[RMDB]
RNA sequence: GGGAACGACUCGAGUAGAGUCGAAAAUAUCGCAUCCAAUGGUAGAAAAUCUCUGGCAUAUUUUCUGUAUCAAUCCGGUUACGACAUAUGGUUAGGGAAUAACAGAUGCGGGUUUAGGCCGGAAUGGCACCAGGUGCCACUUCGGUGGCACCUGGUGAAAAGAAACAACAACAACAAC
Reactivity to 2A3 in 0.01 (KOAc 150mM, MgCl2 10mM, bicine 150mM(pH8.5), 24C), signal-to-noise 2, nucleotides 027 to 126: u180a030u000c000g000c000a000u020c010c060a070a220u140g110g050u180a170g160a040a060a110a110u050c000u000c000u000g040g000c060a020u000a080u000u230u000u020c060u050g020u010a080u100c000a100a070u040c130c050g010g000u060u030a010c020g090a040c080a000u090a070u020g080g070u000u000a020g070g000g000a140a020u000a180a020c020a000g000a000u000g000c000g030g000g000u100u040u030a030g020g000c000c030g020g140a150a170u080g130g000
Reactivity to DMS in 0.01 (KOAc 150mM, MgCl2 10mM, bicine 150mM(pH8.5), 24C), signal-to-noise 1, nucleotides 027 to 126: u050a090u000c000g000c000a000u000c000c030a030a040u020g000g000u060a050g020a160a050a130a180u000c000u000c000u000g020g020c000a040u030a000u000u000u000u000c020u020g000u000a130u020c120a090a120u000c300c110g000g000u000u000a030c040g000a000c300a000u000a000u000g010g020u030u000a000g000g020g000a000a050u020a060a060c120a280g000a010u000g000c010g000g050g000u000u020u000a080g000g010c020c000g000g000a100a000u000g000g000
Background:
Conditions: 150 mM KOAc, 10 mM MgCl2 and 150 mM bicine (pH 8.5), 24 C. Structure probing data (2A3 and DMS) for a 177-nucleotide construct. It was measured as part of the RMDB library OK1LIB. Reactivities are given for positions 27 through 126.